Structure probing data (2A3 and DMS) for a 177-nucleotide construct. For 2A3 the reverse transcriptase was SuperScript II with manganese. The reactions ran in a buffer of 150 mM KOAc, 10 mM MgCl2 and 150 mM bicine (pH 8.5), at 24 C. Source: RMDB library OK2TST, as collected in RNAgym.

RNA sequence: GGGAACGACUCGAGUAGAGUCGAAAAGGCGGAUUCUUCCUCGAUCUCGUCCUGUGAGAGAUGCGGUGCCUCUAUGAGAAAGUCCUGAUACAGCACGAGGAUGCGCUCGAGGGCCUCCAUGGAGUAGUAGUGACUUAUCAUUCGUGAUAAGUCACUAAAAAGAAACAACAACAACAAC
Reactivity to 2A3 in 0.01 (KOAc 150mM, MgCl2 10mM, bicine 150mM(pH8.5), 24C), signal-to-noise 4, nucleotides 027 to 126: g090g060c060g040g030a080u080u000c020u070u040c010c010u020c010g000a020u000c020u010c010g050u050c000c020u040g000u070g020a100g010a010g000a040u120g040c030g040g040u070g010c010c000u000c030u090a210u210g060a040g070a190a070a010g040u040c010c010u010g010a040u040a220c050a050g040c010a000c030g060a060g080g000a040u040g010c040g000c010u010c010g050a040g000g030g000c000c000u000c000c010a050u080g040g030a070g030u120a010g040
Reactivity to DMS in 0.01 (KOAc 150mM, MgCl2 10mM, bicine 150mM(pH8.5), 24C), signal-to-noise 6, nucleotides 027 to 126: g020g020c050g020g000a100u000u000c040u000u000c110c000u000c030g010a030u000c030u000c030g010u000c020c000u000g010u010g010a090g020a060g000a080u010g010c090g000g010u000g010c110c020u000c020u000a090u010g010a110g020a080a090a140g000u010c070c000u000g000a100u010a170c190a090g000c030a030c040g000a080g020g010a060u000g010c120g000c120u000c020g010a050g010g000g010c040c020u000c020c020a090u010g000g000a070g010u000a110g010